[RMDB]
RNA sequence: GGGAACGACUCGAGUAGAGUCGAAAAGCGGCCACCGUGGAAAAUGCUCGAAAGAAUCGGGUCGGGGACAGGAUCGAGGUCGCCUCGCCCGGCGAGCUGGCGGAUUUCGACAGCGACAUCGCACUGGUAGACAACAAGAAUUCGUUCUUGUUGUCUAAAAAGAAACAACAACAACAAC
Reactivity to DMS in 0.01 (KOAc 150mM, MgCl2 10mM, bicine 150mM(pH8.5), 24C), signal-to-noise 7, nucleotides 027 to 126: g010c060g010g010c030c020a090c050c020g030u000g010g010a070a060a090a070u010g010c010u000c020g000a090a160a140g020a110a130u010c020g000g000g010u010c060g020g000g000g010a110c090a100g010g010a090u000c090g000a110g020g010u000c040g000c020c010u000c070g000c040c010c020g000g000c030g000a040g010c010u010g000g010c020g010g000a150u010u010u000c030g000a060c060a060g010c030g010a100c110a090u000c050g010c100a120c090u000g010g010
Reactivity to 2A3 in 0.01 (KOAc 150mM, MgCl2 10mM, bicine 150mM(pH8.5), 24C), signal-to-noise 5, nucleotides 027 to 126: g020c020g020g020c020c010a050c020c030g040u080g070g020a050a060a050a080u160g000c010u020c020g090a140a170a130g110a090a140u070c010g010g000g060u080c020g000g000g000g020a050c070a100g080g070a030u110c060g050a070g030g080u030c010g040c000c000u010c010g000c010c000c000g000g020c010g000a010g000c010u020g020g000c000g030g030a090u070u140u100c020g010a020c020a030g020c010g030a040c030a090u070c030g000c020a020c080u050g070g000
The record gives the reactivity of an RNA of 177 nucleotides to DMS and 2A3. Source: RMDB library OK2TST, as collected in RNAgym. The reactions ran in a buffer of 150 mM KOAc, 10 mM MgCl2 and 150 mM bicine (pH 8.5), at 24 C. The 2A3 profile rests on 8,378 reads. High DMS reactivity at an A or C suggests that its Watson-Crick edge is free.